[RMDB]
RNA sequence: GGGAACGACUCGAGUAGAGUCGAAAACGAUCUGUUCGCAGAUCGAGCUACGGAGACGUAGCAGAGCACGACAGAGCUCUGGGUCGUGCGAUACCGGAAAUAAGACCAGCUGCACGAGUGCUAGCAGUUGGCAGAGCUCAAAGAAACAGCACUCGAAGUAUAGGACCGGAUUCGUCCGGUCCUAUACAAAAGAAACAACAACAACAAC
Reactivity to 2A3 in 0.01 (KOAc 150mM, MgCl2 10mM, bicine 150mM(pH8.5), 24C), signal-to-noise 2, nucleotides 027 to 156: c040g020a000u000c000u020g020u120u090c300g040c050a010g000a000u000c000g000a060g000c000u000a000c000g000g030a080g060a030c000g010u000a000g010c020a000g080a000g010c000a000c000g000a020c000a010g040a020g000c010u000c030u070g180g000g000u000c010g010u020g020c000g000a030u080a180c000c000g040g200a030a070a030u270a120a070g050a110c030c000a010g000c010u010g000c000a010c240g000a000g000u010g000c000u000a020g010c010a000g000u000u000g040g000c050a000g000a000g000c000u010c030a080a190a010g170a070a100a060c080a010g020c000a010c000u000c010g040a130a020

An RNA of 207 nucleotides, treated with 2A3 and read out base by base. Source: RMDB library OK3TST, as collected in RNAgym. Conditions: 150 mM KOAc, 10 mM MgCl2 and 150 mM bicine (pH 8.5), 24 C.